[RMDB]
RNA sequence: GGGAACGACUCGAGUAGAGUCGAAAAAUAGUAGGUGAUUAAUGUUCUGUCCCCUUCCUCCACUCUUCUUUGUCACUUGAGCAUUCACUUUGGGUUGGCAUUUAGUGAGCUCCUUCUGCCCGUCAACCGUAAGGAAAGAUUUCGAUCUUUCCUUACGAAAAGAAACAACAACAACAAC
Reactivity to DMS in 0.01 (KOAc 150mM, MgCl2 10mM, bicine 150mM(pH8.5), 24C), signal-to-noise 9, nucleotides 027 to 126: a080u010a060g020u010a070g010g010u000g010a090u000u010a080a080u010g010u000u000c040u000g010u000c020c010c020c060u000u000c020c010u000c040c040a090c070u000c050u010u000c040u000u000u010g010u000c050a060c070u000u000g000a060g010c060a080u010u000c060a050c060u000u010u000g010g010g010u010u000g020g010c060a060u000u000u000a070g020u000g000a080g010c040u000c030c050u000u000c050u000g010c020c010c030g010u010c110a070a080c180
Reactivity to 2A3 in 0.01 (KOAc 150mM, MgCl2 10mM, bicine 150mM(pH8.5), 24C), signal-to-noise 6, nucleotides 027 to 126: a000u110a020g100u030a040g000g070u050g060a090u060u170a140a090u160g060u100u060c050u080g110u090c020c010c000c010u020u020c000c000u000c000c000a050c010u030c000u090u020c010u050u080u070g060u050c020a020c060u030u060g010a010g010c020a080u050u110c030a040c060u050u070u060g060g020g010u030u050g060g000c020a040u070u080u020a080g000u040g040a020g030c020u000c010c000u030u080c010u030g030c000c000c020g040u040c020a040a040c030
Notes: The record gives the reactivity of an RNA of 177 nucleotides to DMS and 2A3. High 2A3 reactivity points to a flexible backbone, as in loops and unpaired stretches. Source: RMDB library OK2TRN, as collected in RNAgym. For DMS, 25,854 sequencing reads were counted.